About this RNA: The data come from the RNA Mapping Database (RMDB), library TTRINS. Chemical mapping of a 177-nucleotide RNA with DMS. The RNA was probed in 150 mM KOAc, 10 mM MgCl2 and 150 mM bicine (pH 8.5) at 24 C.

[RMDB]
RNA sequence: GGGAACGACUCGAGUAGAGUCGAAAAGAUAUGGAGUUCUGCGGGAUUAGGGAAUCCCGAUAAGCUGAUGUCGGAAACGACAUACCAGCUUUUGACGGGACCCUAAUCCCGCAGAACUCCUAAGUCACAUAAGUACAACGUUCGCGUUGUACUUAUGAAAAGAAACAACAACAACAAC
Reactivity to DMS in 0.01 (KOAc 150mM, MgCl2 10mM, bicine 150mM(pH8.5), 24C), signal-to-noise 3, nucleotides 027 to 126: g010a050u000a300u000g010g010a040g030u000u000c010u000g030c000g000g000g010a040u000u010a000g000g020g010a100a120u010c010c000c010g010a040u000a010a010g010c000u000g020a040u000g010u020c000g000g010a170a100a300c000g020a010c010a040u000a070c300c030a030g000c010u000u000u000u000g010a180c200g010g000g010a090c010c000c000u000a010a000u000c000c000c000g000c010a000g000a000a000c000u000c000c000u000a000a050g010u000c040a300

DMS adducts were read by reverse transcription with MarathonRT.